The record gives the reactivity of an RNA of 207 nucleotides to 2A3 and DMS. Conditions: 150 mM KOAc, 10 mM MgCl2 and 150 mM bicine (pH 8.5), 24 C. The DMS profile rests on 6,027 reads. It was measured as part of the RMDB library OK3TST.
RNA sequence: GGGAACGACUCGAGUAGAGUCGAAAAGGACAAUGGAUGACUGGGUCAACGUCACGCAGGUGUUCAAAAUUGCACAGUUCUCAAAGACUCAGAGAACCAAGAUACUGGAGAAGGAGUCCACCAAUAUGAAACACGAAAAGGUGCAGGGUGGUUACGGCAAAUAUGAGCUUUUCGAAGCUCAUAUUUGAAAAGAAACAACAACAACAAC
Reactivity to 2A3 in 0.01 (KOAc 150mM, MgCl2 10mM, bicine 150mM(pH8.5), 24C), signal-to-noise 4, nucleotides 027 to 156: g040g010a010c020a050a070u090g040g050a080u060g040a050c040u030g000g000g060u040c050a080a020c080g040u040c050a020c110g050c030a040g070g020u040g010u060u050c060a070a060a100a120u100u110g000c030a020c030a060g000u040u000c010u010c000a070a120a040g070a060c030u040c110a010g020a010g010a050a010c020c010a040a040g010a050u070a090c080u060g000g020a030g020a060a060g030g020a010g020u010c010c000a030c010c000a010a020u140a030u160g100a080a080a000c070a010c060g080a100a040a060a050g070g000u040g020c040a020g070g000g000u030g010g020u030u070a040c060g020g000
Reactivity to DMS in 0.01 (KOAc 150mM, MgCl2 10mM, bicine 150mM(pH8.5), 24C), signal-to-noise 3, nucleotides 027 to 156: g010g020a080c020a070a120u010g010g010a100u000g030a110c020u000g000g020g010u000c060a070a120c080g020u010c030a060c060g030c040a060g000g020u000g000u010u000c090a040a070a060a150u000u000g020c040a080c060a110g000u000u000c010u000c010a040a040a130g010a080c040u020c050a150g000a060g000a060a050c020c020a090a150g000a100u000a020c020u010g010g010a050g030a090a090g030g020a140g000u000c030c010a050c010c010a050a120u010a070u010g000a160a080a070c020a050c080g030a060a080a100a080g010g000u000g020c000a110g010g010g010u000g000g000u000u000a040c060g000g010